[RMDB]
RNA sequence: GGGAACGACUCGAGUAGAGUCGAAAACAAUCUCGACCCGGCAGCCAACAGCGAGGUGGUCGAUUUCGGAGAGUUCGCCAACUCGGCGUCACCGCCCUCGAUGUUCACCAAGGUCAGUGACACCGGCCGACAGGGUGAACUUCGGUUCACCCUGUCGAAAAGAAACAACAACAACAAC
Reactivity to 2A3 in 0.01 (KOAc 150mM, MgCl2 10mM, bicine 150mM(pH8.5), 24C), signal-to-noise 2, nucleotides 027 to 126: c010a010a110u050c010u010c070g040a050c030c000c000g010g080c080a090g030c070c050a110a080c030a050g030c020g020a040g000g030u120g090g020u060c080g000a040u060u180u100c060g010g030a040g020a020g050u050u100c030g040c170c000a060a030c070u060c070g030g030c010g000u020c000a000c000c020g040c020c000c030u010c050g050a060u070g140u240u200c060a080c120c040a100a030g000g000u030c030a010g000u000g090a000c010a050c040c000g030g040c020
Reactivity to DMS in 0.01 (KOAc 150mM, MgCl2 10mM, bicine 150mM(pH8.5), 24C), signal-to-noise 1, nucleotides 027 to 126: c150a080a130u010c060u000c010g020a090c030c010c020g000g010c130a180g000c050c070a060a030c120a060g000c030g000a100g020g040u040g000g040u000c020g000a070u000u000u000c050g000g000a100g000a100g010u000u000c100g000c070c070a060a100c120u010c040g010g020c010g000u020c050a030c020c040g000c130c020c010u000c040g000a040u000g010u000u000c090a050c030c030a100a150g030g020u000c030a030g000u000g020a040c060a050c030c080g000g010c260
Conditions: 150 mM KOAc, 10 mM MgCl2 and 150 mM bicine (pH 8.5), 24 C. An RNA of 177 nucleotides, treated with 2A3 and DMS and read out base by base. For 2A3, 1,408 sequencing reads were counted. It was measured as part of the RMDB library OK2TRN. Reactivities are given for positions 27 through 126. For DMS, 969 sequencing reads were counted.